[RMDB]
RNA sequence: GGGAACGACUCGAGUAGAGUCGAAAACGAUCUGUUCGCAGAUCGAGCUACGGAGACGUAGCAAAGCGAGCUAGGGCCCGGGAGCGCGUCCUACCGGAAAUAAAAACAUAUAGACGUGUGCUACGAUAUGUCCGGGCCCAAAGAAACAGCACACGAACUGGAUUUACUCAUUCGUGAGUAAAUCCAGAAAAGAAACAACAACAACAAC
Reactivity to 2A3 in 0.01 (KOAc 150mM, MgCl2 10mM, bicine 150mM(pH8.5), 24C), signal-to-noise 1, nucleotides 027 to 156: c000g000a000u070c030u070g040u120u210c180g000c040a020g000a010u030c020g010a010g000c010u020a010c000g040g000a060g070a040c010g000u010a000g050c040a000a000a110g010c010g030a010g000c000u100a090g020g000g010c000c000c090g000g000g000a070g010c060g000c040g020u020c010c030u090a100c050c030g060g050a030a090a050u200a010a110a030a040a010c080a020u170a030u020a110g160a040c010g010u010g010u000g010c000u020a060c040g080a090u060a020u290g020u000c000c000g000g010g000c020c000c000a000a000a000g000a010a060a020c000a000g000c030a000c030a000c000g030a010a040